[RMDB]
The data come from the RNA Mapping Database (RMDB), library OK2TST. An RNA of 177 nucleotides, treated with DMS and 2A3 and read out base by base.
RNA sequence: GGGAACGACUCGAGUAGAGUCGAAAAUGCUUAUCAACUUGUUGACACUGGCGGCGCACCGGGUACUGUACUUGCUCAGAACUCGUACAAAGUGAACAAGCAGUGGCUGCGUUAUGCUGGUCAUACCUGGGGUACAAUUAUUCGUAAUUGUACCCCAAAAAGAAACAACAACAACAAC
Reactivity to DMS in 0.01 (KOAc 150mM, MgCl2 10mM, bicine 150mM(pH8.5), 24C), signal-to-noise 4, nucleotides 027 to 126: u010g010c060u000u000a100u000c110a100a080c110u000u010g010u000u000g010a110c120a060c030u010g000g040c020g000g040c020g010c030a070c040c040g020g010g040u010a060c040u010g000u010a080c030u000u000g020c020u010c030a080g010a180a150c090u000c070g000u020a150c190a080a090a060g010u010g010a040a060c040a010a010g010c010a020g010u000g010g030c240u000g010c020g020u010u000a040u000g040c010u000g000g010u000c040a030u010a060c070c120
Reactivity to 2A3 in 0.01 (KOAc 150mM, MgCl2 10mM, bicine 150mM(pH8.5), 24C), signal-to-noise 2, nucleotides 027 to 126: u090g000c030u150u120a080u270c050a020a110c050u100u120g070u120u030g090a010c020a020c110u060g040g020c000g010g000c010g000c000a010c040c000g060g050g130u070a000c010u000g010u040a050c010u010u020g000c000u000c030a010g040a300a040c010u010c060g080u070a030c090a110a080a010g050u040g040a030a000c000a030a000g000c000a020g010u000g020g070c050u020g000c020g020u030u030a090u250g020c010u050g020g020u000c000a030u080a070c030c050
For 2A3 the reverse transcriptase was SuperScript II with manganese. Conditions: 150 mM KOAc, 10 mM MgCl2 and 150 mM bicine (pH 8.5), 24 C.